Background: Chemical mapping of a 177-nucleotide RNA with 2A3 and DMS. Conditions: 150 mM KOAc, 10 mM MgCl2 and 150 mM bicine (pH 8.5), 24 C. It was measured as part of the RMDB library OK1LIB. For DMS, 3,481 sequencing reads were counted.
RNA sequence: GGGAACGACUCGAGUAGAGUCGAAAAACCGCAAGGUUCUGCCUUUUCAUUAAAAGGAGAUAAUACGUAUCAGUCAUUACCAGCAAUUUUAGAUCAAAAGCAAGGCUACAAAUCUGAUGUCAUGCACGUUAGCGUCUUAAUUCGUUAAGACGCUAACAAAAGAAACAACAACAACAAC
Reactivity to 2A3 in 0.01 (KOAc 150mM, MgCl2 10mM, bicine 150mM(pH8.5), 24C), signal-to-noise 7, nucleotides 027 to 126: a010c030c000g030c070a050a060g100g030u070u010c030u090g160c010c000u060u010u010u050c220a190u090u300a050a030a010a030g040g030a010g010a040u110a110a080u130a140c080g050u080a060u110c020a040g110u040c020a020u010u070a040c030c010a010g040c030a070a100u000u030u050u060a140g020a160u130c070a140a110a030a000g050c040a090a050g080g000c000u040a040c090a050a080a040u140c020u050g010a030u070g050u070c040a040u070g030c040a010c120
Reactivity to DMS in 0.01 (KOAc 150mM, MgCl2 10mM, bicine 150mM(pH8.5), 24C), signal-to-noise 3, nucleotides 027 to 126: a050c000c030g000c300a070a080g000g000u000u030c040u010g020c000c000u000u010u000u050c130a120u080u080a030a030a080a070g010g000a040g020a040u020a040a030u030a030c160g000u000a060u010c030a040g000u010c090a000u030u000a100c060c030a070g010c110a020a100u020u000u040u030a100g000a040u030c080a070a040a120a130g010c080a060a020g010g010c030u000a080c070a010a040a050u060c070u020g020a070u020g020u030c070a030u000g020c110a080c160